[RMDB]
RNA sequence: GGGAACGACUCGAGUAGAGUCGAAAACACGUGUGCGAGGGGAACUGACGAGUACAUCAAACCCCGAACAAGCUCGGUUCGCAAGGGCGGCCGCCCCUUUCGGAUAAGCUAAGCCACGUCGGAUCACCUCCUAUAUUCGGUUCGCCGAAUAUAGGAGAAAAGAAACAACAACAACAAC
Reactivity to 2A3 in 0.01 (KOAc 150mM, MgCl2 10mM, bicine 150mM(pH8.5), 24C), signal-to-noise 3, nucleotides 027 to 126: c030a010c010g010u010g060u160g020c030g010a100g000g030g000g000a090a030c060u030g020a010c040g110a090g210u100a050c010a050u020c010a000a050a080c020c000c000c010g000a020a010c030a000a020g010c000u070c150g180g000u020u000c000g030c030a000a020g010g010g020c010g090g110c100c070g030c020c010c000c010u010u030u020c000g010g010a020u010a040a010g000c010u020a030a010g010c000c000a000c000g030u030c060g020g010a060u070c020a060c050
Reactivity to DMS in 0.01 (KOAc 150mM, MgCl2 10mM, bicine 150mM(pH8.5), 24C), signal-to-noise 3, nucleotides 027 to 126: c110a040c030g010u000g010u010g030c030g020a220g010g010g000g000a080a170c200u000g010a060c070g000a170g040u020a140c140a100u000c040a020a110a300c020c000c000c000g020a080a090c270a080a020g020c030u000c070g010g030u000u000c000g010c080a030a020g000g000g000c070g010g010c150c120g000c090c020c000c030u000u000u000c020g010g030a010u000a120a020g000c000u010a040a190g000c060c010a020c010g010u000c100g000g000a250u000c080a110c120
This 177-nucleotide RNA was probed chemically with 2A3 and DMS. For DMS, 1,947 sequencing reads were counted. DMS adducts were read by reverse transcription with MarathonRT. Conditions: 150 mM KOAc, 10 mM MgCl2 and 150 mM bicine (pH 8.5), 24 C. It was measured as part of the RMDB library RFMREP.